[RMDB]
RNA sequence: GGGAACGACUCGAGUAGAGUCGAAAAGAUAUGGACUAUAUGAAACUAGUUCAGCGUUGAAAUCGGAAACGAUGGAGCUGACUAGGAGUACGUAUAGUCCUAAGUCAAACCCCACUUCGGUGGGGAACACAUAGACGGUCUUCGGACCGUCUAUGUGAAAAGAAACAACAACAACAAC
Reactivity to 2A3 in 0.01 (KOAc 150mM, MgCl2 10mM, bicine 150mM(pH8.5), 24C), signal-to-noise 1, nucleotides 027 to 126: g010a000u100a050u170g010g000a000c010u000a000u000a030u240g020a010a010a030c010u010a010g100u240u160c010a000g000c000g300u300u030g100a070a030a000u010c010g000g000a080a050a000c020g000a030u000g050g050a020g000c010u000g000a000c020u010a000g050g000a000g000u000a010c080g000u000a000u000a020g000u040c000c000u000a030a000g000u000c000a020a040a300c000c020c040c040a010c000u010u050c260g130g010u000g010g020g000g000a050a030
Reactivity to DMS in 0.01 (KOAc 150mM, MgCl2 10mM, bicine 150mM(pH8.5), 24C), signal-to-noise 1, nucleotides 027 to 126: g000a080u010a300u010g020g000a030c000u000a000u000a000u000g010a150a150a220c000u000a010g020u010u010c010a000g010c000g000u000u000g000a130a170a010u010c000g020g000a200a060a120c000g000a030u000g010g000a130g020c000u000g010a070c000u000a010g000g010a030g000u000a080c250g010u000a010u000a010g000u000c000c010u000a020a030g000u000c030a060a140a190c000c000c000c000a000c010u000u000c170g000g010u000g010g010g030g000a010a020